[RMDB]
RNA sequence: GGGAACGACUCGAGUAGAGUCGAAAAGAUAUGGAGAUUCUGGCGAGAAUCGUAUCGGAAACGAUACGAAUUCGAUGAGCCAGGAAUCUCCUAAGUCAAAACCAUGUAUACUUCGGUAUACAUGGAACCUGACAAUGAAGUUCGCUUCAUUGUCAGGAAAAGAAACAACAACAACAAC
Reactivity to 2A3 in 0.01 (KOAc 150mM, MgCl2 10mM, bicine 150mM(pH8.5), 24C), signal-to-noise 2, nucleotides 027 to 126: g010a010u010a010u040g000g010a000g020a000u020u020c000u010g020g030c040g050a210g010a130a010u000c010g000u000a000u000c000g000g000a000a000a000c000g000a010u010a010c010g020a060a220u000u000c000g050a120u280g040a010g000c010c000a020g000g050a010a020u000c000u000c000c000u000a010a000g000u000c010a020a020a000a170c000c000a000u000g000u000a000u010a000c000u020u080c300g140g010u010a010u010a000c000a000u000g000g000a000a030
Reactivity to DMS in 0.01 (KOAc 150mM, MgCl2 10mM, bicine 150mM(pH8.5), 24C), signal-to-noise 1, nucleotides 027 to 126: g000a010u000a010u020g000g000a010g000a010u000u000c000u000g020g020c000g000a010g020a020a020u000c000g000u000a010u000c010g010g000a010a010a020c000g000a010u000a000c000g000a030a060u000u000c000g010a210u010g030a080g000c020c010a030g000g020a020a040u000c000u010c000c000u000a010a060g000u020c000a090a080a140a160c000c000a010u000g000u010a010u000a000c000u000u010c210g030g020u000a000u000a000c000a000u000g000g010a010a090